[RMDB]
RNA sequence: GGGAACGACUCGAGUAGAGUCGAAAAUCAUGCUGGCAGACUCAGGAGCAUCCUUGAUGGAUGGCUUGGGUGGAUAAGCUGGGAACCAAAGGGGUCGCACCCUACGGAUAAUCCAGCAAAGGUGUUACAAUCCUGGAUAUUUCGAUAUCCAGGAUUGAAAAGAAACAACAACAACAAC
Reactivity to 2A3 in 0.01 (KOAc 150mM, MgCl2 10mM, bicine 150mM(pH8.5), 24C), signal-to-noise 6, nucleotides 027 to 126: u100c040a030u110g050c030u040g060g020c040a040g020a040c010u010c020a010g010g050a070g200c000a010u000c010c000u140u250g220a210u300g040g010a000u010g000g040c000u000u010g010g000g030u040g010g010a070u070a100a040g000c000u010g000g000g020a030a030c000c000a030a090a050g010g010g000g010u210c050g030c060a140c000c000c000u000a020c020g000g000a020u070a040a020u050c000c000a000g000c000a040a060a030g060g010u060g020u040u020a020
Reactivity to DMS in 0.01 (KOAc 150mM, MgCl2 10mM, bicine 150mM(pH8.5), 24C), signal-to-noise 8, nucleotides 027 to 126: u000c060a080u020g000c020u000g030g010c100a140g000a030c010u000c000a030g010g010a070g030c010a010u000c000c010u000u030g010a160u030g010g010a010u010g000g010c000u000u000g000g000g010u010g000g000a110u020a060a110g010c000u010g000g000g000a130a140c000c010a050a300a040g000g000g000g010u000c300g000c170a300c000c000c000u010a050c300g000g000a080u010a090a110u030c000c010a000g010c000a030a060a110g000g020u010g000u010u010a160
The record gives the reactivity of an RNA of 177 nucleotides to 2A3 and DMS.
DMS (dimethyl sulfate) methylates the pairing face of unpaired adenines and cytosines.
2A3 adducts were read by reverse transcription with SuperScript II with manganese.
Source: RMDB libraries RFM100 and RFMREP, as collected in RNAgym.